[RMDB]
RNA sequence: GGGAACGACUCGAGUAGAGUCGAAAACACAUCGCAGAGCAGGAGCACCCGCCUGGGGCGUCGGCGGGGCCGGAUCCGUGCCAACAGCACCGACUCCCAGCCAGUCGACCGCGACGCGUUCAUCGUCCUAAAGCCCGGAAUUCGUUCCGGGCUUUAGAAAAGAAACAACAACAACAAC
Reactivity to DMS in 0.01 (KOAc 150mM, MgCl2 10mM, bicine 150mM(pH8.5), 24C), signal-to-noise 2, nucleotides 027 to 126: c110a060c090a060u000c010g000c050a110g030a120g000c030a110g000g000a090g000c100a090c080c010c030g040c000c070u000g000g000g000g000c100g010u010c030g030g010c050g040g050g040g040c080c130g000g000a110u010c080c090g000u000g020c010c050a070a110c260a140g000c030a170c040c060g000a050c110u020c020c000c030a050g010c110c030a120g020u020c090g000a120c050c000g030c060g040a050c130g030c020g030u000u010c020a020u040c050g030u000c070
Reactivity to 2A3 in 0.01 (KOAc 150mM, MgCl2 10mM, bicine 150mM(pH8.5), 24C), signal-to-noise 1, nucleotides 027 to 126: c060a010c000a050u150c020g090c050a000g040a020g060c030a060g060g080a110g000c040a110c030c000c030g000c010c070u090g000g000g000g000c100g020u010c030g020g020c010g080g060g090g000c030c000g050g030a020u030c010c060g000u060g000c000c010a170a060c030a120g060c020a000c050c000g010a040c050u040c000c000c000a000g000c000c000a010g000u000c000g000a140c020c020g050c010g020a020c000g040c010g020u000u030c020a060u130c060g060u030c000

The record gives the reactivity of an RNA of 177 nucleotides to DMS and 2A3. Values cover nucleotides 27 to 126.